[RMDB]
RNA sequence: GGGAACGACUCGAGUAGAGUCGAAAAACACCAAAACUGAAAACGGAAGGCAAUCUUUCCACGACGAUACUUACUUUCCUUUGAUCGUCGUUACUACUGGCAUAGCCACAAAGGAGAACAAACAUGAGCGCGGACACUGACUUCGGUCAGUGUCCAAGACACAUUCAAGGUUCGCCUUGAAUGUGUCAAAAGAAACAACAACAACAAC
Reactivity to DMS in 0.01 (KOAc 150mM, MgCl2 10mM, bicine 150mM(pH8.5), 24C), signal-to-noise 2, nucleotides 027 to 156: a090c060a200c020c020a040a050a100a230c140u010g000a060a070a070a060c080g010g000a080a000g010g000c070a090a050u010c030u000u020u000c010c020a240c030g040a060c000g010a030u010a070c050u020u000a050c080u000u000u000c040c050u000u000u010g000a040u010c050g020u000c010g010u000u000a050c030u020a080c030u000g040g000c040a200u000a150g000c030c020a040c070a040a060a060g000g010a100g020a060a130c040a090a080a120c100a120u010g000a050g000c080g050c120g000g020a040c000a030c000u000g000a020c000u020u020c240g020g000u000c010a040g020u010g050u000c000c010a010a030
Reactivity to 2A3 in 0.01 (KOAc 150mM, MgCl2 10mM, bicine 150mM(pH8.5), 24C), signal-to-noise 8, nucleotides 027 to 156: a010c100a120c020c050a090a060a020a070c120u180g060a090a060a040a040c080g030g000a030a000g040g000c130a070a110u080c030u020u070u020c020c000a000c000g010a000c000g000a000u100a140c020u090u020a030c030u080u160u090c020c000u040u020u050g020a010u010c000g010u000c000g000u020u050a010c040u020a030c020u000g030g000c050a210u080a140g010c020c020a020c060a020a010a020g040g020a040g010a060a040c050a080a080a020c050a120u220g060a050g120c090g000c070g030g000a000c000a000c000u000g000a000c000u020u060c170g040g000u000c000a000g000u000g000u000c000c000a000a000
This 207-nucleotide RNA was probed chemically with DMS and 2A3. It was measured as part of the RMDB library M2RFPK. DMS adducts were read by reverse transcription with MarathonRT. For DMS, 2,750 sequencing reads were counted. For 2A3 the reverse transcriptase was SuperScript II with manganese. The RNA was probed in 150 mM KOAc, 10 mM MgCl2 and 150 mM bicine (pH 8.5) at 24 C.